RNA sequence: GGGAACGACUCGAGUAGAGUCGAAAAGGAGGCCGGACCUGAUCCGGCAGCAAUCUCGCACUUGCACAAAUCCAUAUUGCACUGCAAUAUGGACUGGGCGGGAAUGCGAGCUGGGUUCGAAAUGUACGAUCAAUUAAUCCUUCGGGAUUAAUUGAUCAAAAGAAACAACAACAACAAC
Reactivity to 2A3 in 0.01 (KOAc 150mM, MgCl2 10mM, bicine 150mM(pH8.5), 24C), signal-to-noise 2, nucleotides 027 to 126: g050g020a030g030g010c040c010g000g020a050c030c070u150g060a210u000c000c020g030g000c000a000g000c000a000a090u040c000u000c000g000c000a050c050u030u090g000c050a020c010a040a100a030u000c000c010a000u030a000u000u010g040c140a170c300u300g000c010a000a000u000a000u010g000g010a000c020u000g010g010g000c000g000g020g020a120a090u040g000c000g000a020g000c020u080g020g000g000u070u090c040g070a080a100a140u160g020u080a040c100
Reactivity to DMS in 0.01 (KOAc 150mM, MgCl2 10mM, bicine 150mM(pH8.5), 24C), signal-to-noise 2, nucleotides 027 to 126: g020g000a170g010g030c000c010g020g000a110c030c090u010g030a120u000c030c000g040g000c000a050g000c060a120a060u000c000u010c000g000c000a060c010u010u000g000c040a040c060a030a110a300u000c000c010a000u010a010u000u000g000c010a240c300u020g010c010a000a000u000a010u000g000g010a020c100u000g000g010g000c000g000g000g000a080a050u000g020c010g010a020g000c110u010g010g010g000u000u010c100g000a030a080a080u010g010u030a160c250